Record summary:
Structure probing data (2A3 and DMS) for a 207-nucleotide construct. 2A3 adducts were read by reverse transcription with SuperScript II with manganese. The reactions ran in a buffer of 150 mM KOAc, 10 mM MgCl2 and 150 mM bicine (pH 8.5), at 24 C.
[RMDB]
RNA sequence: GGGAACGACUCGAGUAGAGUCGAAAACUUAUGAAGCUAACCCCUAUACUUGUAUAGGCGAUUAAUAAAUCUUCUGUAAAUGCUGUAAGAGGAUUACCCCUUGAGGUUUCAGCACUAGGCUGCUCUAUAAAGUCGGGAUGGUUCGCCAUCCCGACAAGUAAAGAGUGUUGUUCGCAACACUCUUUACAAAAGAAACAACAACAACAAC
Reactivity to 2A3 in 0.01 (KOAc 150mM, MgCl2 10mM, bicine 150mM(pH8.5), 24C), signal-to-noise 2, nucleotides 027 to 156: c020u120u110a040u230g130a080a020g020c010u050a060a060c020c020c020c000u020a010u030a040c050u140u210g050u060a030u040a020g020g020c020g040a100u090u160a140a080u160a090a090a050u010c020u050u000c000u020g140u120a020a120a110u070g030c030u040g070u110a040a040g030a010g030g010a000u030u100a080c020c000c000c050u020u040g120a150g080g000u040u110u080c020a040g020c020a040c100u050a060g130g000c020u000g020c000u000c000u000a110u030a160a110a030g000u000c000g010g000g000a000u000g000g010u000u020c080g040c050c010a010u000c000c000c000g000a010c000a000a000
Reactivity to DMS in 0.01 (KOAc 150mM, MgCl2 10mM, bicine 150mM(pH8.5), 24C), signal-to-noise 1, nucleotides 027 to 156: c030u000u000a060u020g010a110a080g040c100u000a060a070c010c010c000c000u000a050u000a000c060u030u030g050u000a070u010a020g050g020c050g030a050u000u000a050a080u000a060a070a110u000c010u000u000c010u010g020u000a020a060a030u000g020c010u000g020u000a140a070g000a050g020g000a060u000u000a140c010c010c000c110u010u010g000a020g000g030u010u000u020c030a030g040c110a080c050u000a120g010g010c010u000g020c020u000c060u030a100u010a050a110a190g010u000c000g010g020g010a040u030g030g060u000u010c300g000c050c000a030u000c000c000c050g020a000c010a000a080